[RMDB]
The record gives the reactivity of an RNA of 177 nucleotides to 2A3 and DMS. 2A3 is a SHAPE reagent: it acylates the 2'-hydroxyl of flexible nucleotides of all four kinds.
RNA sequence: GGGAACGACUCGAGUAGAGUCGAAAAAAGAUCUUCGCGCGCGUGGAUGCCCUUGUAACACAAGGGAAUACAACCGUUGUUCUGGAUCGUGGCCAGACCUCGGUGACCACGAUCGGCGCCGACGGUCCUAGAUUCAGGACUUCGGUCCUGAAUCUAGAAAAGAAACAACAACAACAAC
Reactivity to 2A3 in 0.01 (KOAc 150mM, MgCl2 10mM, bicine 150mM(pH8.5), 24C), signal-to-noise 1, nucleotides 027 to 126: a010a020g020a010u010c020u000u040c010g000c010g020c010g000c000g010u040g010g000a120u210g010c010c000c050u010u000g180u260a300a040c020a000c010a220a020g000g030g160a010a080u140a100c120a060a010c000c000g000u030u040g110u190u030c030u000g000g040a040u120c120g190u150g250g060c010c010a000g010a000c000c000u000c020g000g000u040g010a060c010c010a000c020g080a100u140c100g110g040c000g010c000c090g070a040c030g010g000u000c000
Reactivity to DMS in 0.01 (KOAc 150mM, MgCl2 10mM, bicine 150mM(pH8.5), 24C), signal-to-noise 2, nucleotides 027 to 126: a050a080g010a060u000c020u000u010c030g030c060g000c020g000c010g060u000g000g050a130u010g000c000c010c020u000u000g010u000a120a130c050a300c000a040a000g000g010g010a040a050u000a120c090a120a040c010c000g060u000u000g000u000u000c000u020g010g000a020u010c180g020u000g050g010c080c010a020g000a000c000c000u000c000g000g010u000g010a200c000c030a020c050g000a070u000c150g000g000c060g010c000c010g040a010c080g000g000u000c020
2A3 adducts were read by reverse transcription with SuperScript II with manganese. For 2A3, 914 sequencing reads were counted. It was measured as part of the RMDB library OK2TST. DMS adducts were read by reverse transcription with MarathonRT.